Annotation:
Structure probing data (2A3 and DMS) for a 177-nucleotide construct. The reactions ran in a buffer of 150 mM KOAc, 10 mM MgCl2 and 150 mM bicine (pH 8.5), at 24 C. For DMS the reverse transcriptase was MarathonRT. The 2A3 profile rests on 1,746 reads.

[RMDB]
RNA sequence: GGGAACGACUCGAGUAGAGUCGAAAAAGAAAGGAUACCGAAAGGUAUCCAAAUUGCACAUUGGAUUGCGGUAACCUCUCACGUGUGACGUUGAAGUAACUAUGUGCAGUAAUACCGCAAGAAAAAAGUCCUGUAUAGAGUUCGCUCUAUACAGGACAAAAGAAACAACAACAACAAC
Reactivity to 2A3 in 0.01 (KOAc 150mM, MgCl2 10mM, bicine 150mM(pH8.5), 24C), signal-to-noise 2, nucleotides 027 to 126: a000g030a030a030a020g020g000a020u010a000c000c000g020a030a010a000g020g000u000a010u000c000c000a000a000a000u020u000g000c020a000c010a000u010u060g090g110a100u090u110g050c010g000g010u020a020a030c000c000u000c000u040c020a020c010g080u190g140u180g200a020c020g000u030u030g050a120a050g010u020a070a010c000u010a010u030g000u000g000c020a020g050u090a030a040u050a030c000c000g010c010a030a040g100a060a110a010a000a020a030
Reactivity to DMS in 0.01 (KOAc 150mM, MgCl2 10mM, bicine 150mM(pH8.5), 24C), signal-to-noise 2, nucleotides 027 to 126: a100g010a110a080a180g000g000a010u000a000c010c000g020a080a110a130g000g020u000a000u000c000c000a000a020a030u000u000g000c020a000c000a030u000u010g060g000a240u010u000g040c010g000g000u000a130a050c050c020u000c060u000c020a000c030g010u000g010u000g020a050c020g010u000u030g000a020a040g000u000a050a040c050u000a050u000g010u000g000c040a020g010u010a060a100u000a030c030c030g030c050a080a040g000a020a070a030a040a130a130